[RMDB]
RNA sequence: GGGAACGACUCGAGUAGAGUCGAAAAGUGAGUGACAGGGGAAAUGGGGAUGGACUGGAAGUGGGCAGCAUGGAGCUGACCUUCAUCAUGGCUUGGCCAACAUAAUGCCUCUUCCCCUUGUCUCUCCUUGAGAUGUCGAUUUCGAUCGACAUCUCAAAAAAGAAACAACAACAACAAC
Reactivity to 2A3 in 0.01 (KOAc 150mM, MgCl2 10mM, bicine 150mM(pH8.5), 24C), signal-to-noise 4, nucleotides 027 to 126: g150u160g010a000g000u030g010a000c000a000g010g000g000g040a000a020a140u270g030g010g010g020a020u080g040g070a070c060u080g040g030a130a080g030u060g020g080g020c010a000g000c010a040u260g230g060a090g020c010u010g060a230c010c000u010u020c020a160u040c010a040u060g060g000c050u110u140g220g010c010c020a020a020c010a070u200a100a050u260g060c010c000u000c000u000u000c000c010c000c000u010u030g000u000c000u000c000u000c010c010
Reactivity to DMS in 0.01 (KOAc 150mM, MgCl2 10mM, bicine 150mM(pH8.5), 24C), signal-to-noise 2, nucleotides 027 to 126: g000u030g010a010g000u000g000a010c020a000g000g010g000g000a020a010a060u020g000g000g010g000a010u000g020g020a140c230u010g010g020a060a040g010u000g010g000g060c010a010g000c020a140u030g010g010a210g000c020u030g000a040c030c000u030u020c020a040u040c040a120u020g010g030c020u040u010g010g020c010c000a050a300c070a100u020a070a040u040g000c000c000u000c020u000u000c040c000c000c030u000u020g010u000c000u000c010u000c000c050